RNA sequence: GGGAACGACUCGAGUAGAGUCGAAAAGAGACAGGAUCGACAAGGGUGUAAAGAUCGCUCUUUUACUCGGCAUGAUACCACCGUUAUCGGGUCAACAGAGUAGUUGCAAAUGACAACAAUGCUCAGGAAGGGGUAGCACCGUUCGCGGUGCUACCAAUCUACUGAUGCACUUCGGUGCAUCAGUAGAAAAAGAAACAACAACAACAAC
Reactivity to DMS in 0.01 (KOAc 150mM, MgCl2 10mM, bicine 150mM(pH8.5), 24C), signal-to-noise 2, nucleotides 027 to 156: g000a080g010a110c080a140g000g000a060u010c010g000a140c020a090a100g000g060g050u000g000u010a020a300a220g010a010u000c040g010c010u010c040u010u010u000u000a210c040u000c010g000g020c000a100u030g010a080u000a130c010c000a060c010c000g020u010u040a020u000c080g000g010g000u000c020a070a080c100a200g000a070g020u000a020g010u000u000g040c050a080a070a180u020g000a140c050a030a030c000a030a040u000g000c010u020c020a120g010g010a150a140g020g030g020g000u000a000g010c000a020c010c010g060u000u010c300g040c040g010g020u010g000c000u000a000c000c010a000a010
Reactivity to 2A3 in 0.01 (KOAc 150mM, MgCl2 10mM, bicine 150mM(pH8.5), 24C), signal-to-noise 6, nucleotides 027 to 156: g010a000g000a040c080a160g120g070a030u010c030g020a040c100a110a190g220g120g050u150g050u180a090a110a020g010a000u010c000g000c000u000c010u010u020u010u010a050c020u010c010g000g000c010a010u150g010a000u020a030c000c000a000c010c000g050u080u060a000u070c040g000g000g000u010c000a000a030c040a010g020a000g020u070a010g010u030u020g040c050a090a180a270u250g080a190c010a040a000c010a020a170u110g010c010u010c030a020g080g080a060a070g100g020g000g000u000a000g020c000a000c020c000g030u040u050c240g000c000g080g000u010g000c000u000a000c000c000a000a000
An RNA of 207 nucleotides, treated with DMS and 2A3 and read out base by base. For DMS the reverse transcriptase was MarathonRT. Values cover nucleotides 27 to 156. For DMS, 2,672 sequencing reads were counted.